[RMDB]
RNA sequence: GGGAACGACUCGAGUAGAGUCGAAAAGAUAUGGAGUUUCAUACAUCGAAGAACUCUGUCGGAAACGACAGAGGGAGAUGGUGACGGACUCCUAAGUCAAACUAAUGACUGUUCGCAGUCAUUAGAAGUAAGAACUCUGGUUCGCCAGAGUUCUUACAAAAGAAACAACAACAACAAC
Reactivity to DMS in 0.01 (KOAc 150mM, MgCl2 10mM, bicine 150mM(pH8.5), 24C), signal-to-noise 1, nucleotides 027 to 126: g000a010u010a100u040g000g000a020g030u000u000u030c020a040u000a210c020a020u000c010g000a140a200g010a090a300c000u010c000u000g000u000c000g000g010a030a050a030c010g010a020c010a020g000a000g000g000g000a010g000a010u000g040g020u000g000a080c300g010g000a030c000u010c010c000u000a020a070g000u000c000a110a100a230c020u020a000a010u000g000a010c000u010g000u000u030c300g050c010a000g000u000c000a020u000u030a000g010a070a080
Reactivity to 2A3 in 0.01 (KOAc 150mM, MgCl2 10mM, bicine 150mM(pH8.5), 24C), signal-to-noise 2, nucleotides 027 to 126: g000a020u000a030u150g000g010a000g020u040u140u070c080a100u170a300c040a020u010c070g300a300a060g020a020a020c000u000c000u050g000u040c000g000g050a000a040a000c000g000a010c000a020g000a000g000g000g000a020g000a000u040g010g060u020g020a070c190g080g100a020c010u000c010c000u000a010a000g050u030c040a020a200a210c000u000a010a010u000g000a000c000u010g050u030u070c300g060c180a000g000u000c000a000u010u000a000g010a050a000